[RMDB]
RNA sequence: GGGAACGACUCGAGUAGAGUCGAAAAGAUAUGGAAUGUUGUAGGGAGCGGUACGUGAGGGUCGGAAACGACCCUCUUCGCGAGGAUCUACACCAUUCCUAAGUCAAAAGCCUCCUUCGGGAGGCAACUAACGAAGAUUCUUCGGAAUCUUCGUUAGAAAAGAAACAACAACAACAAC
Reactivity to DMS in 0.01 (KOAc 150mM, MgCl2 10mM, bicine 150mM(pH8.5), 24C), signal-to-noise 4, nucleotides 027 to 126: g000a050u010a300u010g000g020a020a010u010g000u000u000g010u000a020g000g000g000a030g020c020g020g030u010a090c300g030u000g010a000g030g020g010u000c000g000g000a070a060a210c020g010a020c000c000c000u000c000u000u000c000g020c020g000a080g030g000a030u020c000u000a020c000a010c040c000a020u000u000c010c010u010a020a100g010u020c040a080a130a170a190g000c000c000u000c000c000u000u010c230g020g010g030a000g020g000c000a010a030
Reactivity to 2A3 in 0.01 (KOAc 150mM, MgCl2 10mM, bicine 150mM(pH8.5), 24C), signal-to-noise 2, nucleotides 027 to 126: g020a030u070a020u170g000g000a000a000u010g010u010u020g010u020a010g020g010g010a060g040c060g080g100u300a190c140g160u110g030a010g020g000g000u000c030g030g000a100a030a040c020g000a010c010c020c010u000c000u010u020c000g000c010g050a180g030g000a020u010c000u000a000c000a000c000c000a000u010u000c020c000u010a110a020g050u000c030a070a080a000a110g000c010c000u030c020c000u060u120c190g150g000g000a000g000g000c020a000a000